Annotation
Chemical mapping of a 177-nucleotide RNA with DMS and 2A3. The DMS profile rests on 13,597 reads. In probing experiments dimethyl sulfate is read out at A N1 and C N3, which are open when not base-paired. Conditions: 150 mM KOAc, 10 mM MgCl2 and 150 mM bicine (pH 8.5), 24 C. 2A3 adducts were read by reverse transcription with SuperScript II with manganese. Reactivities are given for positions 27 through 126.
[RMDB]
RNA sequence: GGGAACGACUCGAGUAGAGUCGAAAACGGCGAGUAUUGGUGGCGGCAGCGGCAGCAACUGCGGCUGCAUGGGGGUGGCGGCGGCAGCGGCGGCCCGGGGGUAGCGGCGAGCAAAGACGUCGGGCAGAGCCCGUACGUAUUUCGAUACGUACGGGCUAAAAGAAACAACAACAACAAC
Reactivity to DMS in 0.01 (KOAc 150mM, MgCl2 10mM, bicine 150mM(pH8.5), 24C), signal-to-noise 5, nucleotides 027 to 126: c110g010g000c060g000a100g020u010a090u020u020g000g020u010g010g000c070g000g000c030a020g000c040g020g050c030a010g010c220a080a090c100u010g020c020g000g000c000u010g000c020a050u010g010g010g000g010g030u020g000g020c110g010g010c050g000g010c060a060g000c120g000g000c060g000g010c030c060c030g000g000g000g010g000u010a050g010c040g000g000c040g000a090g010c080a060a090a110g020a100c060g020u000c010g000g000g000c080a110g020
Reactivity to 2A3 in 0.01 (KOAc 150mM, MgCl2 10mM, bicine 150mM(pH8.5), 24C), signal-to-noise 4, nucleotides 027 to 126: c020g030g010c030g020a070g050u110a160u130u110g080g020u130g070g020c030g030g000c000a020g040c010g120g000c010a020g010c050a050a100c110u070g000c030g090g000c010u010g010c030a050u060g020g000g000g010g050u080g020g000c020g010g010c020g020g010c010a020g010c020g020g000c000g010g010c010c030c000g000g010g000g000g000u060a040g030c020g030g000c020g000a030g020c020a040a050a050g050a050c020g030u040c020g010g010g000c030a030g030